[RMDB]
RNA sequence: GGGAACGACUCGAGUAGAGUCGAAAAGAUAUGGAUAUCUUUGAUCUCAGACGACAUCGAUCUCGGAAACGAGGGAGUCGUAUGAGGGAGAUAUCCUAAGUCAAAGCAGACUGUUCGCAGUCUGCAACAUCUUCUACGAGUUCGCUCGUAGAAGAUGAAAAGAAACAACAACAACAAC
Reactivity to 2A3 in 0.01 (KOAc 150mM, MgCl2 10mM, bicine 150mM(pH8.5), 24C), signal-to-noise 5, nucleotides 027 to 126: g010a010u080a030u130g010g000a000u010a010u020c020u250u160u120g150a160u020c000u000c020a080g030a090c000g010a000c020a290u290c120g110a160u050c010u000c010g020g050a090a070a040c020g000a010g000g040g010a020g010u000c000g000u020a090u080g010a000g010g000g000a010g000a000u010a010u000c000c000u010a130a010g020u030c070a130a050a080g000c000a000g000a010c000u030g020u070u130c300g000c130a000g000u000c000u000g000c000a000a010
Reactivity to DMS in 0.01 (KOAc 150mM, MgCl2 10mM, bicine 150mM(pH8.5), 24C), signal-to-noise 4, nucleotides 027 to 126: g000a070u000a300u000g000g000a010u000a000u000c000u000u000u010g000a060u010c010u000c010a020g000a010c000g010a000c000a210u010c150g000a070u010c000u000c010g010g000a130a100a190c000g000a010g000g000g000a030g020u000c000g020u000a000u000g000a020g020g010g000a020g000a010u000a000u000c000c000u000a020a080g020u000c060a070a120a140g020c000a000g000a020c000u000g010u000u010c230g010c010a010g010u000c000u000g010c010a040a120